[RMDB]
RNA sequence: GGGAACGACUCGAGUAGAGUCGAAAAGAUAUGGACGUUCCCACGAGGCUUGGACCUAUGAUCGGAAACGAUCAUAGCUAGCCUGUGGGACGUCCUAAGUCAAAACGGAUGGCUUCGGCCAUCCGAAGAGCAAUGACUUGUUCGCAAGUCAUUGCUCAAAAGAAACAACAACAACAAC
Reactivity to 2A3 in 0.01 (KOAc 150mM, MgCl2 10mM, bicine 150mM(pH8.5), 24C), signal-to-noise 2, nucleotides 027 to 126: g030a020u080a050u200g000g000a000c000g000u290u300c010c030c000a000c020g260a180g030g030c100u300u300g030g070a120c000c000u000a000u000g010a000u020c000g000g020a040a040a060c020g000a000u030c000a000u000a000g000c000u010a000g000c000c040u030g000u040g000g070g010a000c000g020u000c000c000u010a000a000g020u030c030a020a030a080a100c000g000g010a010u000g020g000c010u030u190c300g160g000c010c010a020u020c000c000g000a000a000
Reactivity to DMS in 0.01 (KOAc 150mM, MgCl2 10mM, bicine 150mM(pH8.5), 24C), signal-to-noise 1, nucleotides 027 to 126: g000a030u000a170u010g000g000a020c000g030u000u050c000c000c000a070c050g020a100g020g020c010u010u010g030g000a050c300c020u010a000u000g000a000u000c010g000g000a070a070a100c000g030a000u000c010a000u000a000g010c000u000a030g020c010c010u010g000u000g000g000g000a000c000g030u000c000c000u020a010a160g040u000c030a120a040a110a200c020g020g010a010u000g000g000c000u000u010c300g010g000c000c000a000u000c000c000g020a000a100
An RNA of 177 nucleotides, treated with 2A3 and DMS and read out base by base. The DMS profile rests on 1,420 reads. Reactivities are given for positions 27 through 126. For 2A3 the reverse transcriptase was SuperScript II with manganese. DMS adducts were read by reverse transcription with MarathonRT. The reactions ran in a buffer of 150 mM KOAc, 10 mM MgCl2 and 150 mM bicine (pH 8.5), at 24 C. DMS (dimethyl sulfate) methylates the pairing face of unpaired adenines and cytosines. The data come from the RNA Mapping Database (RMDB), library TTRDES.